[RMDB]
RNA sequence: GGGAACGACUCGAGUAGAGUCGAAAAAUCGCAUAGGAUCGCGUACGCCAUGACAUGCUAGCUGUAGACACAUGGUACGUCUAGACUAGGAUCGAUCCGCGUGACAUGCUGCGAUCGCUAGGUACGCGGAUACCCGCUACUUCGGUAGCGGGUAUCCAAAAGAAACAACAACAACAAC
Reactivity to 2A3 in 0.01 (KOAc 150mM, MgCl2 10mM, bicine 150mM(pH8.5), 24C), signal-to-noise 2, nucleotides 027 to 126: a020u130c040g000c010a030u050a140g000g040a020u020c020g020c020g010u060a030c060g020c040c040a030u070g040a070c000a040u050g110c020u020a030g030c050u080g130u190a020g020a050c020a010c000a200u190g120g040u300a090c080g030u000c030u060a060g090a170c000u040a040g040g040a040u050c030g040a110u000c050c030g000c010g020u060g060a030c010a160u210g020c020u040g020c020g020a000u050c020g030c190u010a030g000g050u010a040c060g000c050
Reactivity to DMS in 0.01 (KOAc 150mM, MgCl2 10mM, bicine 150mM(pH8.5), 24C), signal-to-noise 3, nucleotides 027 to 126: a100u000c040g000c090a150u000a040g020g020a010u000c030g060c010g030u010a060c060g040c050c050a030u030g000a150c190a040u000g000c020u000a000g020c120u000g010u000a020g010a040c030a160c090a110u010g030g030u000a070c160g010u000c010u000a060g000a050c020u000a010g010g010a030u000c080g000a080u000c110c180g000c010g020u000g020a090c100a070u010g010c040u000g010c030g040a020u000c010g010c050u010a060g000g030u000a040c150g020c130